[RMDB]
RNA sequence: GGGAACGACUCGAGUAGAGUCGAAAACAAGGGUUCGGCCGGGGCCAAAGCCGAUCUCGCAAACCCGCUCGCCCGGGCCGGGCGCGAGCAGCUCGACGGCGAUGCGAUUGACGUCGGCGGUCUCGGCGAUUAGGCAAUAGUUCGCUAUUGCCUAAUCAAAAGAAACAACAACAACAAC
Reactivity to DMS in 0.01 (KOAc 150mM, MgCl2 10mM, bicine 150mM(pH8.5), 24C), signal-to-noise 3, nucleotides 027 to 126: c050a130a070g000g010g010u010u010c030g000g020c000c000g010g000g020g050c000c010a140a100a220g000c000c000g010a020u000c300u030c100g040c160a040a090a190c260c090c010g000c020u000c010g030c010c010c080g010g000g030c060c100g000g000g010c020g010c260g000a060g000c090a190g000c040u000c010g010a170c200g000g000c000g000a020u010g010c000g020a040u030u020g000a080c200g010u000c030g010g010c020g000g020u010c000u000c000g020g020c020
Reactivity to 2A3 in 0.01 (KOAc 150mM, MgCl2 10mM, bicine 150mM(pH8.5), 24C), signal-to-noise 7, nucleotides 027 to 126: c030a050a120g170g030g030u110u100c040g060g000c000c000g010g000g010g000c010c010a140a060a010g010c000c000g010a030u030c050u030c120g050c060a040a080a130c030c030c010g000c000u000c010g020c010c020c010g020g010g000c040c030g120g120g000c010g000c030g030a060g030c040a020g010c010u030c020g110a150c110g040g000c000g010a030u190g000c000g020a030u020u140g040a040c040g010u010c000g000g000c020g000g000u000c000u000c000g000g000c010

This 177-nucleotide RNA was probed chemically with DMS and 2A3.
The reactions ran in a buffer of 150 mM KOAc, 10 mM MgCl2 and 150 mM bicine (pH 8.5), at 24 C.
DMS (dimethyl sulfate) methylates the pairing face of unpaired adenines and cytosines.
For DMS, 3,831 sequencing reads were counted.
Values are in units of 0.01, from 0 to 300, in steps of 10.
2A3 adducts were read by reverse transcription with SuperScript II with manganese.